[RMDB]
RNA sequence: GGGAACGACUCGAGUAGAGUCGAAAAAGGGUUAGUGCUCUGGCUACUGCACAGAAACGUAACCGGUAUAAUAGGAUAUGAAAAUGAGUUUAUAUGUAGUCUAGGUAACUAGGCUACAUAAAUGAGAAUUAGACAUAGCAUUCGUGCUAUGUCUAAUAAAAGAAACAACAACAACAAC
Reactivity to 2A3 in 0.01 (KOAc 150mM, MgCl2 10mM, bicine 150mM(pH8.5), 24C), signal-to-noise 6, nucleotides 027 to 126: a000g100g000g000u030u030a020g030u050g090c070u000c020u040g010g020c020u140a160c100u240g020c060a070c020a210g040a020a080a000c020g020u030a020a000c030c000g000g030u130a110u040a100a130u090a040g080g020a050u070a030u210g130a100a040a040a100u120g030a040g100u100u160u060a170u040a000u030g000u000a000g010u000c000u000a000g010g010u040a180a030c000u000a000g000g000c000u000a000c000a000u000a000a010a000u060g040a010g050a040
Reactivity to DMS in 0.01 (KOAc 150mM, MgCl2 10mM, bicine 150mM(pH8.5), 24C), signal-to-noise 9, nucleotides 027 to 126: a080g010g000g010u000u010a050g020u010g010c140u000c020u000g000g010c030u020a090c220u030g020c040a080c030a040g000a040a120a110c070g000u010a030a030c020c000g010g010u020a040u020a070a070u020a070g000g000a100u020a060u000g010a050a060a070a080u010g010a140g010u010u010u010a100u000a020u030g000u000a000g010u000c000u000a000g000g010u050a090a140c000u000a000g000g000c000u000a010c000a000u000a000a050a070u010g010a130g010a120